[RMDB]
RNA sequence: GGGAACGACUCGAGUAGAGUCGAAAAGUUGAGAGCGUUUAACUUAAGUCUUAUUUAUUAGCUUAAAAAAACUAUAUACAAGUGGUGGUAGUCCGCCACUCUAAGGGGACGCCUUUAGAAGAAGAGGGAAAGGCACUAAGCUUCGGCUUAGUGCCAAUCACUUCUAUGAGUUCGCUCAUAGAAGUGAAAAAGAAACAACAACAACAAC
Reactivity to 2A3 in 0.01 (KOAc 150mM, MgCl2 10mM, bicine 150mM(pH8.5), 24C), signal-to-noise 1, nucleotides 027 to 156: g050u090u110g060a030g000a010g040c060g000u070u100u030a150a070c020u060u050a060a000g040u050c020u110u120a210u300u130u080a180u090u240a050g010c040u130u100a020a010a040a040a000a000a000c090u080a090u030a040u020a220c040a020a080g000u000g030g040u020g010g010u060a040g030u050c030c000g000c000c040a020c000u030c010u010a000a000g050g020g030g040a040c020g070c010c000u070u030u030a030g000a120a000g030a050a000g020a070g000g010g040a040a120a160g010g060c060a000c000u010a020a000g000c040u030u080c300g020g000c000u000u000a000g010u000g000c000c000a000a000

An RNA of 207 nucleotides, treated with 2A3 and read out base by base. The reactions ran in a buffer of 150 mM KOAc, 10 mM MgCl2 and 150 mM bicine (pH 8.5), at 24 C.